The data come from the RNA Mapping Database (RMDB), library M2RFPK.
An RNA of 207 nucleotides, treated with 2A3 and read out base by base.
RNA sequence: GGGAACGACUCGAGUAGAGUCGAAAAAGCGAUGAUACGUCAUCGCAACGAUUGCCUGAUCGUAAAACAGGUGACGGCCGUGGCCGCGACCACGUAAAAAAGCGUAACGUGGUCUACGGACCACGAAAAAAGCGCGGAACGUUCGCGUUCCGCGCAAGUGGUGAAUACAGUUCGCUGUAUUCACCACAAAAGAAACAACAACAACAAC
Reactivity to 2A3 in 0.01 (KOAc 150mM, MgCl2 10mM, bicine 150mM(pH8.5), 24C), signal-to-noise 3, nucleotides 027 to 156: a000g000c000g010a000u010g010a020u030a080c220g080u020c010a000u000c000g000c020a010a000c000g040a060u020u040g000c000c010u020g010a050u060c050g110u200a010a030a020a080c010a030g010g010u000g080a050c070g070g010c060c000g000u000g010g010c050c000g000c000g010a000c000c000a010c020g020u060a060a020a000a020a020a020g110c070g010u040a070a010c010g000u000g000g000u020c010u030a060c120g060g000a110c000c000a000c000g010a030a000a000a000a000a000g000c000g000c000g000g000a010a000c000g030u070u080c190g000c010g090u000u000c010c020g000c020g000c000a020a000
The 2A3 profile rests on 2,582 reads.